An RNA of 207 nucleotides, treated with 2A3 and DMS and read out base by base. For DMS the reverse transcriptase was MarathonRT. The data come from the RNA Mapping Database (RMDB), library M2RFPK. For 2A3 the reverse transcriptase was SuperScript II with manganese. Values cover nucleotides 27 to 156. 2A3 is a SHAPE reagent: it acylates the 2'-hydroxyl of flexible nucleotides of all four kinds.
[RMDB]
RNA sequence: GGGAACGACUCGAGUAGAGUCGAAAAUGGACUUUUUACAGUUCCUACUUAUCCGGUUUUCACGCUGUUUUAUUGGCGCAAAGGUUUACGGAUAAACAACUAAUAAUUAAACCUUUUGUGUGCGAAAAUUGGACGUUUAGGUUCGCCUAAACGUCAAGAUUCCUAUAUGAUUCGUCAUAUAGGAAUCAAAAGAAACAACAACAACAAC
Reactivity to 2A3 in 0.01 (KOAc 150mM, MgCl2 10mM, bicine 150mM(pH8.5), 24C), signal-to-noise 4, nucleotides 027 to 156: u090g030g010a030c040u060u110u080u110u230a110c160a060g010u090u100c000c000u010a080c020u040u040a010u010c000c000g010g010u000u000u010u020c050a020c020g000c010u040g160u160u100u070u200a160u140u210g020g000c000g010c040a040a010a000g020g010u000u000u000a000c000g000g000a000u020a040a110a020c040a030a000c040u160a050a120u130a150a030u210u140a010a000a010c000c000u000u000u080u130g050u010g010u030g020c110g060a050a050a100a170u110u130g100g000a000c000g000u000u000u000a010g020g010u010u020c120g080c030c000u010a000a000a010c000g000u000c000a000a000
Reactivity to DMS in 0.01 (KOAc 150mM, MgCl2 10mM, bicine 150mM(pH8.5), 24C), signal-to-noise 2, nucleotides 027 to 156: u010g010g000a040c040u000u010u020u010u020a080c080a130g010u000u000c010c030u000a090c130u010u000a030u010c000c020g000g010u010u000u000u000c080a090c050g010c010u010g010u000u000u000u000a160u020u040g000g000c010g060c020a070a080a040g010g020u000u000u000a140c000g010g000a030u000a010a070a190c040a040a120c050u000a100a140u010a090a170u020u000a010a020a010c010c000u000u000u000u000g000u000g010u010g000c020g000a070a070a110a210u000u010g010g000a010c010g000u010u000u000a000g020g010u000u000c300g040c030c000u000a000a010a010c000g030u000c020a010a060